[RMDB]
The data come from the RNA Mapping Database (RMDB), library RFM100. An RNA of 177 nucleotides, treated with DMS and 2A3 and read out base by base. The reactions ran in a buffer of 150 mM KOAc, 10 mM MgCl2 and 150 mM bicine (pH 8.5), at 24 C.

RNA sequence: GGGAACGACUCGAGUAGAGUCGAAAAAAGUCCCCUCAAAAGGGACACAUCUAAGGGCUUGAUAGUCUAUGAUGAAUGACACCAAGAGUUGGCUGAUGGCAACAUGAAAGGACACGUGCAAGACCUGGUCUUCGAAACUGUUCGCAGUUUCGAAGACAAAAGAAACAACAACAACAAC
Reactivity to DMS in 0.01 (KOAc 150mM, MgCl2 10mM, bicine 150mM(pH8.5), 24C), signal-to-noise 1, nucleotides 027 to 126: a100a100g070u000c000c000c000c150u000c300a000a070a100a250g000g010g000a000c000a160c000a000u000c010u020a000a100g030g050g090c000u000u070g020a170u000a000g000u000c030u030a300u000g050a000u000g000a130a060u090g000a120c040a080c080c000a020a000g040a070g020u000u000g000g000c030u000g050a060u000g000g000c080a150a060c000a010u000g000a000a050a000g020g030a000c020a110c040g000u010g000c070a040a000g000a080c040c000u000g000
Reactivity to 2A3 in 0.01 (KOAc 150mM, MgCl2 10mM, bicine 150mM(pH8.5), 24C), signal-to-noise 1, nucleotides 027 to 126: a000a000g000u000c010c000c000c040u140c070a210a190a000a040g000g030g000a000c000a000c000a000u050c030u030a010a010g000g000g000c010u060u050g130a060u300a140g010u000c000u040a020u140g020a000u060g020a000a290u100g000a000c030a000c120c000a070a000g150a000g060u070u000g100g050c000u040g030a110u090g040g000c000a020a000c000a060u050g000a190a040a000g020g040a000c000a000c060g110u080g000c040a020a000g050a060c020c000u000g060